Source: RMDB library 15KLIB, as collected in RNAgym. Structure probing data (DMS and 2A3) for a 170-nucleotide construct. Values cover nucleotides 27 to 129. The RNA was probed in 150 mM KOAc, 10 mM MgCl2 and 150 mM bicine (pH 8.5) at 24 C.
[RMDB]
RNA sequence: GGGAACGACUCGAGUAGAGUCGAAAAUUGUUCAGAAUCUUUCUCCGCAAUGCCUAUGUGUACACUUCACAAGGGUUUGUGGUGGUCAAUGGCAAAGUUUCUACACUUGUCAAACAAGUGUUAGACUGGAUCGCAUCGUUCGCGAUGCGAAAAAGAAACAACAACAACAAC
Reactivity to DMS in 0.01 (KOAc 150mM, MgCl2 10mM, bicine 150mM(pH8.5), 24C), signal-to-noise 2, nucleotides 027 to 129: u000u000g060u020u050c160a070g000a050a100u040c060u070u000u000c040u040c000c000g020c060a040a020u000g080c040c020u000a100u040g070u020g030u030a060c150a090c220u060u060c060a000c030a060a300g000g000g000u000u010u000g010u010g020g000u010g060g020u010c120a010a000u040g000g020c040a100a070a030g000u000u000u000c040u170a030c000a030c010u000u020g000u030c230a060a040a300c000a000a000g050u000g020u000u100a110g030a080c020u050g000g000a160
Reactivity to 2A3 in 0.01 (KOAc 150mM, MgCl2 10mM, bicine 150mM(pH8.5), 24C), signal-to-noise 2, nucleotides 027 to 129: u060u130g020u070u020c030a050g100a180a090u070c000u010u090u000c040u010c030c000g000c010a030a050u000g050c000c000u140a210u120g040u000g020u050a060c090a060c110u000u040c000a030c030a040a060g070g120g000u000u000u000g020u010g000g020u020g000g010u110c000a000a140u000g000g000c080a120a060a030g010u010u060u000c020u020a000c000a010c000u000u000g020u040c070a030a060a060c000a010a000g020u000g010u010u010a020g020a040c050u030g070g000a050